[RMDB]
RNA sequence: GGGAACGACUCGAGUAGAGUCGAAAAGCUCGGAGACGAGCAAGGCUGACAAAACCCUGUCCCCACCUCCACGUGGUGUCGGCUGGAUAAUGCUGCAUUAUGUUGCAUUUAUCAACUGGGAAGCAAAAGCGUGACGUGCAUUCGUGCACGUCACGCUAAAAGAAACAACAACAACAAC
Reactivity to 2A3 in 0.01 (KOAc 150mM, MgCl2 10mM, bicine 150mM(pH8.5), 24C), signal-to-noise 1, nucleotides 027 to 126: g000c000u000c020g070g000a000g000a030c000g000a000g000c000a000a130g030g000c030u020g030a000c000a060a240a120a140c000c000c000u010g040u030c000c020c010c020a030c000c000u000c010c100a180c040g010u010g050g000u000g010u000c010g030g020c000u050g010g000a030u000a000a020u000g000c050u040g000c010a070u050u200a190u300g050u000u010g040c000a000u090u090u040a030u010c000a000a010c050u050g010g020g050a200a000g030c030a000a000a150
Chemical mapping of a 177-nucleotide RNA with 2A3. Reactivities are rounded to 0.1 and cut off at 0 and 3. For 2A3 the reverse transcriptase was SuperScript II with manganese.